[RMDB]
Background:
Structure probing data (DMS) for a 177-nucleotide construct. For DMS the reverse transcriptase was MarathonRT. Conditions: 150 mM KOAc, 10 mM MgCl2 and 150 mM bicine (pH 8.5), 24 C. Values cover nucleotides 27 to 126.
RNA sequence: GGGAACGACUCGAGUAGAGUCGAAAACAUUAAACCCCUCAAUGAAGAUGCUUAGACGUCCUUUAGGGGUUACUUCUGAGCAUGGCUUCAAGAGUCUUCCACGACUUCAUGUGACAGUUAUGUGAACAAAUUACUCCGUCUUCGGACGGAGUAAUUUAAAAGAAACAACAACAACAAC
Reactivity to DMS in 0.01 (KOAc 150mM, MgCl2 10mM, bicine 150mM(pH8.5), 24C), signal-to-noise 1, nucleotides 027 to 126: c080a120u030u000a030a090a150c040c000c040c050u000c070a080a170u000g010a020a030g020a050u000g000c010u000u010a070g000a110c070g020u000c000c010u000u010u000a050g040g020g010g010u020u010a040c040u000u000c040u010g030a090g010c010a030u020g020g020c010u010u010c050a090a100g000a040g010u000c020u030u010c060c090a160c130g020a100c040u000u010c100a080u010g020u020g010a090c140a050g000u000u000a030u010g010u010g020a080a070c160